[RMDB]
RNA sequence: GGGAACGACUCGAGUAGAGUCGAAAAUGUCAGCCGCGGGACCCUUGGGGGCCAAGGGCGAGGCUCUGGCCGCAGGGAGAGAAACGGAGCGGGUCCCCUCGCGCGGUGCGCUUCCCUGAGCUGUGGGACUUGCACCCGGGACUAGGCUCACACACACCUACUACAUUAAGUUCGCUUAAUGUAGUAGAAAAGAAACAACAACAACAAC
Reactivity to 2A3 in 0.01 (KOAc 150mM, MgCl2 10mM, bicine 150mM(pH8.5), 24C), signal-to-noise 2, nucleotides 027 to 156: u080g040u030c020a010g040c010c000g100c050g000g010g110a110c000c000c040u030u040g040g030g020g030g000c030c020a060a080g030g000g010c060g050a040g070g010c010u020c030u040g030g020c030c010g070c050a030g050g040g000a070g000a010g000a080a130a060c150g050g000a010g000c050g010g030g000u010c010c020c000c020u090c040g110c000g020c230g000g000u010g000c020g000c000u030u030c010c000c010u040g090a170g070c100u080g060u140g100g000g000a020c010u020u030g010c000a000c010c020c010g010g000g020a010c030u070a060g120g060c010u010c000a040c010a000c010a000c000a010c040
Reactivity to DMS in 0.01 (KOAc 150mM, MgCl2 10mM, bicine 150mM(pH8.5), 24C), signal-to-noise 1, nucleotides 027 to 156: u000g030u000c040a090g000c020c000g100c030g020g020g010a080c010c010c010u000u000g020g050g030g030g000c020c010a070a060g040g000g030c030g020a120g000g010c020u000c030u010g020g030c000c040g040c040a070g000g000g000a150g000a100g000a050a160a050c050g020g010a140g030c000g000g000g050u010c030c020c000c020u010c100g000c050g040c090g020g030u010g030c000g020c090u000u000c000c010c000u000g020a190g010c150u010g010u010g000g010g010a000c070u000u020g020c020a030c010c010c040g000g010g020a070c030u000a090g010g030c000u000c020a080c060a070c040a130c060a110c080